[RMDB]
RNA sequence: GGGAACGACUCGAGUAGAGUCGAAAAGGUGACUAGGAUCGCGGUUAUCACCGAUGAGUGACCGCGUCAAGGCGGUCGCGCCGCCGGACGGAAGGACGAUGAUGACCACCGAAUCGGUUGCCCGGAACAGUUACGCACGAUUCGUCGUGCGUAACUGAAAAGAAACAACAACAACAAC
Reactivity to 2A3 in 0.01 (KOAc 150mM, MgCl2 10mM, bicine 150mM(pH8.5), 24C), signal-to-noise 3, nucleotides 027 to 126: g050g000u030g020a010c070u110a140g270g000a020u020c020g030c010g030g000u000u020a010u070c030a010c020c030g060a100u130g050a040g060u050g010a010c000c010g040c040g030u120c030a020a100g110g000c000g000g010u030c020g000c030g000c000c010g030c020c030g040g050a070c040g050g040a090a140g110g050a040c010g040a060u060g000a030u060g010a010c000c020a000c040c030g000a030a020u040c010g030g020u030u020g000c020c000c000g020g000a070a090
Reactivity to DMS in 0.01 (KOAc 150mM, MgCl2 10mM, bicine 150mM(pH8.5), 24C), signal-to-noise 2, nucleotides 027 to 126: g010g030u000g000a010c000u000a170g030g060a030u010c060g130c200g000g010u000u010a020u000c030a010c000c000g000a140u060g030a150g000u000g060a000c000c000g030c020g010u030c220a020a160g010g000c000g030g000u000c130g020c060g000c000c030g000c020c010g030g000a130c010g000g010a110a130g000g000a300c010g000a050u020g010a070u000g050a000c080c020a040c220c040g000a040a000u010c100g010g000u000u000g020c010c000c010g000g040a090a230

The record gives the reactivity of an RNA of 177 nucleotides to 2A3 and DMS.
Conditions: 150 mM KOAc, 10 mM MgCl2 and 150 mM bicine (pH 8.5), 24 C.
For DMS the reverse transcriptase was MarathonRT.